Chemical mapping of a 177-nucleotide RNA with 2A3 and DMS.

[RMDB]
RNA sequence: GGGAACGACUCGAGUAGAGUCGAAAAGUCACCCGCUUCCUGAAUUUCGACGUAGAUAUCGGGUAGAAUACCGGCUUCCUCGGCGGCGUCUAGGGCGUUGUCGACGGCUUCCUUGACGGCCGUGACGGCCGUGGGAUAGUUUCGACUAUCCCACGGCAAAAGAAACAACAACAACAAC
Reactivity to 2A3 in 0.01 (KOAc 150mM, MgCl2 10mM, bicine 150mM(pH8.5), 24C), signal-to-noise 2, nucleotides 027 to 126: g020u030c030a060c040c020c010g040c030u050u030c000c020u050g100a170a160u050u070u060c090g120a130c100g100u170a040g010a060u070a060u120c020g000g020g020u030a040g060a110a040u100a140c040c040g030g010c000u040u030c010c010u030c010g010g000c000g000g020c010g010u010c030u120a100g020g110g000c020g000u020u060g060u060c030g030a030c040g020g000c000u060u040c000c020u000u050g050a030c030g080g030c030c020g020u030g030a050c060g070
Reactivity to DMS in 0.01 (KOAc 150mM, MgCl2 10mM, bicine 150mM(pH8.5), 24C), signal-to-noise 6, nucleotides 027 to 126: g020u000c070a090c040c020c050g020c070u010u000c010c010u000g010a080a130u000u000u000c030g010a100c170g010u010a080g010a070u000a080u000c020g010g000g000u000a050g000a080a080u010a100c150c070g010g010c040u000u000c040c020u000c030g000g000c010g010g010c030g010u000c020u010a090g020g000g010c060g030u010u000g010u000c050g000a030c040g010g010c120u000u000c040c060u010u000g010a070c080g010g010c010c010g020u000g010a100c170g020
Reactivities are given for positions 27 through 126.
For 2A3 the reverse transcriptase was SuperScript II with manganese.